[RMDB]
RNA sequence: GGGAACGACUCGAGUAGAGUCGAAAAGACAUUUUGGAUUCUGUUACAACUUUACCAAAAUUAAGGAUAUACGGACUUACUAUCUUUUUCUCAACGUCAAUUUGAUGAACACACGAUGAAAAUGUACUUCGAUGAGAUUGAUCAUGUAGAAAACAACCGUGUGGUAAUAUUUCGAUAUUACCACACGAAAAGAAACAACAACAACAAC
Reactivity to DMS in 0.01 (KOAc 150mM, MgCl2 10mM, bicine 150mM(pH8.5), 24C), signal-to-noise 2, nucleotides 027 to 156: g030a090c130a100u000u000u010u020g000g020a150u010u000c030u000g000u000u000a080c050a050a020c030u020u000u020a300c090c030a060a060a040a070u000u020a060a080g020g020a170u000a100u000a060c060g040g010a040c130u010u000a050c160u000a050u000c030u000u000u000u000u000c000u000c000a110a100c070g000u000c020a020a070u000u000u010g010a030u000g010a060a110c040a020c060a070c020g010a120u030g010a140a040a120a030u000g010u000a070c050u000u000c030g040a100u000g010a080g000a070u000u000g000a090u000c050a100u000g000u000a120g020a060a050a060a090c090a090a090c110
Reactivity to 2A3 in 0.01 (KOAc 150mM, MgCl2 10mM, bicine 150mM(pH8.5), 24C), signal-to-noise 4, nucleotides 027 to 156: g030a000c020a020u030u010u040u070g160g000a200u180u000c070u090g090u180u180a060c050a160a080c060u050u060u130a070c010c000a010a030a040a030u130u110a070a070g020g000a020u040a010u020a120c080g070g020a040c070u060u040a030c020u060a030u070c030u040u060u020u030u000c020u000c030a070a070c040g030u020c030a030a050u020u030u130g050a060u050g050a110a000c030a000c000a010c080g060a050u070g120a070a090a040a030u090g010u040a070c030u030u010c030g070a070u050g010a010g030a090u040u060g020a030u060c030a040u070g020u080a030g020a070a070a010a060c040a010a050c050
This 207-nucleotide RNA was probed chemically with DMS and 2A3. 2A3 adducts were read by reverse transcription with SuperScript II with manganese. The DMS profile rests on 2,280 reads. It was measured as part of the RMDB library OK3TST.